Source information:
An RNA of 177 nucleotides, treated with 2A3 and read out base by base. Reactivities are given for positions 27 through 126. The 2A3 profile rests on 506 reads. For 2A3 the reverse transcriptase was SuperScript II with manganese. Conditions: 150 mM KOAc, 10 mM MgCl2 and 150 mM bicine (pH 8.5), 24 C.
[RMDB]
RNA sequence: GGGAACGACUCGAGUAGAGUCGAAAACGAUUAUGUGCCUAUAUUAGUAGUCAGCCGUGUUUGGACCCACGCCUAAUUGAAAUAGGUGCGCGCUUGGAUGCAUGUUUAUCACAGGACACAGACUGCCGAAGCUCUCGAAAUUCGUUUCGAGAGCUUCAAAAGAAACAACAACAACAAC
Reactivity to 2A3 in 0.01 (KOAc 150mM, MgCl2 10mM, bicine 150mM(pH8.5), 24C), signal-to-noise 1, nucleotides 027 to 126: c000g040a010u100u080a080u300g040u130g000c000c000u030a040u000a030u240u080a100g030u010a010g100u000c060a010g040c010c010g070u010g000u030u130u170g140g000a110c070c020c000a000c010g060c040c010u100a220a170u100u200g200a000a150a050u060a030g030g010u020g000c110g040c000g060c010u000u100g070g000a030u070g070c030a060u170g060u050u080u080a030u110c000a000c010a100g000g080a000c000a030c070a140g030a000c030u000g020c030c110